Source: RMDB library OK2TRN, as collected in RNAgym. Chemical mapping of a 177-nucleotide RNA with DMS. For DMS the reverse transcriptase was MarathonRT. The reactions ran in a buffer of 150 mM KOAc, 10 mM MgCl2 and 150 mM bicine (pH 8.5), at 24 C.

RNA sequence: GGGAACGACUCGAGUAGAGUCGAAAAUGGUUUGUACUUGACACUCUUAUCAAACAAAUGUCACGUUAAACUAAUUGCAAGGCUGUUAAGGAUGUUGAAACUAUAGCAGAUGCAAGGGAGUGCAGAGUCGAUCAGGUUCGUUCGCGAACCUGAUCGAAAAAGAAACAACAACAACAAC
Reactivity to DMS in 0.01 (KOAc 150mM, MgCl2 10mM, bicine 150mM(pH8.5), 24C), signal-to-noise 1, nucleotides 027 to 126: u000g000g010u000u000u000g000u000a010c010u000u000g010a110c000a000c130u000c150u020u040a220u020c300a060a070a130c080a080a060a090u000g000u000c040a020c160g010u000u010a060a050a090c040u010a040a130u000u000g000c060a030a060g000g010c030u040g000u000u000a000a150g000g000a090u000g000u070u010g000a080a090a160c060u000a110u020a080g000c040a010g010a120u000g010c060a000a040g020g000g010a030g010u000g000c090a060g050a040g030